An RNA of 207 nucleotides, treated with 2A3 and read out base by base.
It was measured as part of the RMDB library ARCHII.
For 2A3, 680 sequencing reads were counted.

[RMDB]
RNA sequence: GGGAACGACUCGAGUAGAGUCGAAAAAAGGACCUCAAAAAAAUCUCUUUUCGUCAUAUGAACUUUAAGGUGUAUGAAGUUUCAUAUUUGAUUUUUUCAGCAGAACGAUAGAGACUUCAUUUAACUUAGGUUGAUCUAGGCCAGAGACAGACCUACGCCAACGUUUUAUGUUCGCAUAAAACGUUGGAAAAGAAACAACAACAACAAC
Reactivity to 2A3 in 0.01 (KOAc 150mM, MgCl2 10mM, bicine 150mM(pH8.5), 24C), signal-to-noise 1, nucleotides 027 to 156: a000a000g040g030a080c040c030u130c160a120a080a050a110a110a150a250u000c020u020c020u050u050u060u070c000g010u000c010a070u040a010u070g020a010a010c000u050u080u150a130a040g050g020u050g020u060a030u070g010a000a000g030u050u040u080c050a040u030a000u040u070u120g040a050u010u070u070u000u100u190c030a070g030c000a030g050a120a010c030g000a000u020a020g000a000g000a030c000u030u030c050a050u040u050u150a020a020c060u010u050a030g020g000u000u040g020a030u000c000u080a040g010g080c030c000a010g000a010g000a060c000a020g040a020c000c020u020a050c110g010
The RNA was probed in 150 mM KOAc, 10 mM MgCl2 and 150 mM bicine (pH 8.5) at 24 C. 2A3 adducts were read by reverse transcription with SuperScript II with manganese.